[RMDB]
RNA sequence: GGGAACGACUCGAGUAGAGUCGAAAAUGUCGCGGCAGUUAACGUGCAAUGCUCAUUGGCAGGACUUACCAAGUCUGGGGGCCGAUGAGGGUUGGCUCAAAGUAGGGUUUUGACUUGAAAACUCAAGCUCUAGCAUAAUGUUCGCAUUAUGCUAGAGAAAAGAAACAACAACAACAAC
Reactivity to DMS in 0.01 (KOAc 150mM, MgCl2 10mM, bicine 150mM(pH8.5), 24C), signal-to-noise 4, nucleotides 027 to 126: u010g010u000c060g000c040g000g010c030a080g010u000u000a070a090c110g010u000g020c020a040a030u010g000c010u010c020a040u010u000g010g050c000a130g000g000a020c010u000u010a170c300c290a070a080g000u000c010u000g000g020g010g010g010c010c020g000a000u000g010a020g010g010g020u000u010g000g010c040u010c040a110a060a080g010u010a080g020g010g000u000u000u000u000g020a110c080u010u010g010a030a030a060a080c060u000c030a080a110g000
Reactivity to 2A3 in 0.01 (KOAc 150mM, MgCl2 10mM, bicine 150mM(pH8.5), 24C), signal-to-noise 3, nucleotides 027 to 126: u100g010u020c020g010c020g040g000c020a050g050u120u120a070a030c020g030u060g050c010a020a040u080g090c000u010c010a020u020u010g020g000c020a020g000g010a000c000u030u060a230c090c110a040a020g010u000c010u010g060g000g040g220g000c000c000g000a010u020g000a010g010g020g000u030u010g030g030c020u020c050a060a060a020g060u080a080g050g000g000u010u020u020u110g040a030c010u020u090g060a040a060a040a020c020u010c000a020a030g000
An RNA of 177 nucleotides, treated with DMS and 2A3 and read out base by base. 2A3 adducts were read by reverse transcription with SuperScript II with manganese. Conditions: 150 mM KOAc, 10 mM MgCl2 and 150 mM bicine (pH 8.5), 24 C. The DMS profile rests on 4,613 reads. The 2A3 profile rests on 4,727 reads.